[RMDB]
An RNA of 207 nucleotides, treated with 2A3 and read out base by base.
RNA sequence: GGGAACGACUCGAGUAGAGUCGAAAAACACAUAAUGAUAUUUUAGCAGAGAGUGAUCCCGCUAUUUGCAUUGAAAAAUUAACUGGUAUGCUCAUGACUUUGUUGUCUAUUGAUUCAACAUUGGACGUGAAGGCAUUGUGUGAUGAAUUACUCGCCAGGUUCCAACAACAUUCGUGUUGUUGGAACCAAAAGAAACAACAACAACAAC
Reactivity to 2A3 in 0.01 (KOAc 150mM, MgCl2 10mM, bicine 150mM(pH8.5), 24C), signal-to-noise 1, nucleotides 027 to 156: a000c060a000c000a000u100a050a090u170g030a160u090a090u160u160u170u210a100g000c030a000g000a000g000a030g050u030g000a130u000c000c000c000g010c040u030a010u030u090u030g040c070a050u000u170g170a030a040a000a160a140u200u100a140a050c060u030g180g000u170a070u140g140c000u000c000a000u030g010a030c000u000u040u000g010u070u000g040u000c010u040a170u090u300g170a090u050u200c010a000a010c000a000u000u040g020g080a130c000g000u040g040a040a030g140g000c000a000u000u110g000u010g000u000g040a060u070g030a040a110u070u100a140c000u060c060g140c070c000a010

For 2A3, 289 sequencing reads were counted. Source: RMDB library OK3TST, as collected in RNAgym.